[RMDB]
RNA sequence: GGGAACGACUCGAGUAGAGUCGAAAAUACCGUCUUCUCCCCGACGGUUUCAAUCCAUAGCUUCACGUUGUGUAGCGUAGGUGGAAGGUAUCGUGUGGUGUAUAAACACCACAUAGUCUCGUAGGGGUCAAGCUGAUAAACUUCGGUUUAUCAGCAACAAUUAAUAUCACUUCGGUGAUAUUAAUUGAAAAGAAACAACAACAACAAC
Reactivity to 2A3 in 0.01 (KOAc 150mM, MgCl2 10mM, bicine 150mM(pH8.5), 24C), signal-to-noise 9, nucleotides 027 to 156: u080a000c000c000g020u010c020u200u040c030u100c000c000c000c010g000a010c010g000g010u010u050u070c050a040a040u010c010c000a040u040a080g010c010u040u060c010a020c080g300u300u280g020u100g030u060a010g020c020g080u100a100g130g050u020g010g030a040a030g070g020u110a070u200c070g010u000g000u000g030g000u010g040u020a100u120a280a240a010c000a000c000c000a000c000a000u010a000g020u000c010u000c060g070u110a060g000g020g010g000u040c060a080a040g000c000u000g000a000u000a000a000a000c000u020u050c120g060g000u000u000u000a000u000c000a000g000c000a000a000
Reactivity to DMS in 0.01 (KOAc 150mM, MgCl2 10mM, bicine 150mM(pH8.5), 24C), signal-to-noise 4, nucleotides 027 to 156: u000a130c000c010g020u000c040u000u010c040u000c020c010c010c060g010a030c000g010g000u000u000u000c040a110a100u000c020c030a110u000a210g020c010u000u000c030a040c030g030u010u000g020u000g020u000a050g010c010g030u000a040g030g030u000g010g020a060a070g010g020u000a050u010c070g020u000g010u000g010g020u000g020u000a160u010a150a110a130c000a010c010c000a000c010a010u000a030g010u000c040u000c040g010u010a070g010g030g000g030u000c050a060a140g020c000u000g010a020u000a010a010a020c000u000u000c300g050g010u000u000u000a010u000c000a010g020c010a020a050